Chemical mapping of a 177-nucleotide RNA with 2A3 and DMS. The reactions ran in a buffer of 150 mM KOAc, 10 mM MgCl2 and 150 mM bicine (pH 8.5), at 24 C.

[RMDB]
RNA sequence: GGGAACGACUCGAGUAGAGUCGAAAAGAUAUGGAAUGUCUGAAUAGCAACAGCUCGGAAACGAGACAUGCUAGCUCAGCAUUCCUAAGUCAAAACCUUUCACUCCACUUCGGUGGAGUGAAAGGAACUGACCGUAUGAGUUCGCUCAUACGGUCAGAAAAGAAACAACAACAACAAC
Reactivity to 2A3 in 0.01 (KOAc 150mM, MgCl2 10mM, bicine 150mM(pH8.5), 24C), signal-to-noise 1, nucleotides 027 to 126: g000a010u040a020u100g020g030a040a010u010g220u140c000u000g000a020a010u020a010g000c000a030a140c040a220g050c000u010c000g030g050a110a080a030c010g010a010g010a050c030a020u060g000c000u010a000g060c110u000c000a010g010c020a000u000u000c010c000u000a120a020g070u000c030a020a030a090a280c020c000u000u020u030c010a000c000u000c000c000a020c030u040u150c300g170g030u000g000g030a000g020u000g010a000a020a000g010g000a000a010
Reactivity to DMS in 0.01 (KOAc 150mM, MgCl2 10mM, bicine 150mM(pH8.5), 24C), signal-to-noise 1, nucleotides 027 to 126: g000a030u000a300u020g010g000a000a010u000g020u010c010u000g000a050a120u000a020g000c000a010a060c300a180g000c010u000c000g020g000a030a090a240c000g010a000g000a000c080a150u010g000c000u010a020g000c210u010c000a000g000c020a010u000u000c000c000u000a000a130g000u010c040a110a110a060a040c000c000u000u000u000c010a000c000u010c000c000a000c000u000u010c170g030g010u000g000g000a020g010u010g000a000a000a000g000g010a040a070
The data come from the RNA Mapping Database (RMDB), library TTRDEL.